Structure probing data (DMS and 2A3) for a 207-nucleotide construct. The reactions ran in a buffer of 150 mM KOAc, 10 mM MgCl2 and 150 mM bicine (pH 8.5), at 24 C. DMS adducts were read by reverse transcription with MarathonRT. For 2A3 the reverse transcriptase was SuperScript II with manganese.
RNA sequence: GGGAACGACUCGAGUAGAGUCGAAAAUUCUCAGCACUCAUCAAGAAGUAGGCUUAGGCCAAUUGCUUGGUGGUGAAAGUAGAGGGCAGGUAGCACUUCGACGCCUCUAAGUACGCUGUGGGAGUAGAAAACUGGACAUCGUUCGCGAUGUCCAGAAGAAUAUACUUAGGUUCGCCUAAGUAUAUUCAAAAGAAACAACAACAACAAC
Reactivity to DMS in 0.01 (KOAc 150mM, MgCl2 10mM, bicine 150mM(pH8.5), 24C), signal-to-noise 3, nucleotides 027 to 156: u010u000c010u000c010a140g000c010a050c030u010c000a020u000c000a010a040g000a040a050g020u000a110g030g020c000u000u010a150g070g010c000c020a070a060u010u000g000c010u000u000g020g050u000g000g000u000g010a050a070a110g040u010a050g010a050g000g020g020c060a090g000g020u010a110g010c090a170c060u000u010c040g020a090c040g010c030c010u010c040u000a060a130g010u010a060c070g020c010u000g030u000g020g000g010a140g040u010a100g000a110a030a090a200c010u000g000g000a020c000a010u000c010g040u000u000c300g060c030g010a020u000g020u000c010c000a000g010a010a050
Reactivity to 2A3 in 0.01 (KOAc 150mM, MgCl2 10mM, bicine 150mM(pH8.5), 24C), signal-to-noise 5, nucleotides 027 to 156: u050u010c000u000c000a020g030c010a010c040u200c010a020u020c000a020a020g020a090a000g040u090a040g040g000c020u090u100a090g140g000c020c010a040a110u060u050g020c000u000u000g000g000u000g000g020u020g020a090a070a010g050u070a010g000a030g010g040g080c070a050g050g040u100a050g060c050a040c080u060u080c050g060a060c040g050c010c000u000c010u020a050a030g050u050a040c070g000c100u060g010u070g070g020g020a060g020u100a030g110a040a100a020a030c000u000g000g000a000c000a000u000c010g030u060u030c100g020c020g110a000u000g000u000c000c000a000g000a000a000